This 177-nucleotide RNA was probed chemically with 2A3 and DMS. For DMS the reverse transcriptase was MarathonRT. Reactivities are given for positions 27 through 126. For 2A3 the reverse transcriptase was SuperScript II with manganese. The reactions ran in a buffer of 150 mM KOAc, 10 mM MgCl2 and 150 mM bicine (pH 8.5), at 24 C.
RNA sequence: GGGAACGACUCGAGUAGAGUCGAAAAGAUAUGGACCAACAAAGCUCGAAGAACUAUAUGUGCUUCGUCGCUAUUCGGAAACGAAUAGCGACGAACCCUAUAGGGAGAGCACAAAUGGUCCUAAGUCCUUUAGAUACUGGUUCGCCAGUAUCUAAAGAAAAGAAACAACAACAACAAC
Reactivity to 2A3 in 0.01 (KOAc 150mM, MgCl2 10mM, bicine 150mM(pH8.5), 24C), signal-to-noise 2, nucleotides 027 to 126: g040a000u130a060u300g000g000a000c030c000a020a050c050a120a140a010g000c010u050c010g300a300a100g030a090a050c020u000a020u020a020u150g110u140g060c250u000u000c020g020u000c000g010c040u040a060u030u080c010g000g080a130a020a060c000g030a000a030u000a010g000c020g020a000c020g000a010a000c010c000c000u010a000u000a020g050g050g000a070g000a010g030c040a000c030a030a050a040u010g030g010u020c000c000u020a130a000g040u040c000
Reactivity to DMS in 0.01 (KOAc 150mM, MgCl2 10mM, bicine 150mM(pH8.5), 24C), signal-to-noise 2, nucleotides 027 to 126: g000a080u020a260u010g010g010a010c010c010a030a090c110a190a290a150g000c010u000c010g000a110a170g000a210a230c000u000a010u000a020u010g010u000g050c180u000u000c000g030u000c000g000c000u000a010u010u000c010g010g000a090a070a220c010g030a030a010u010a040g050c000g030a000c000g000a000a000c040c020c050u000a000u010a020g000g000g000a050g000a020g020c000a020c110a080a120a140u000g020g000u000c000c000u000a030a100g010u000c040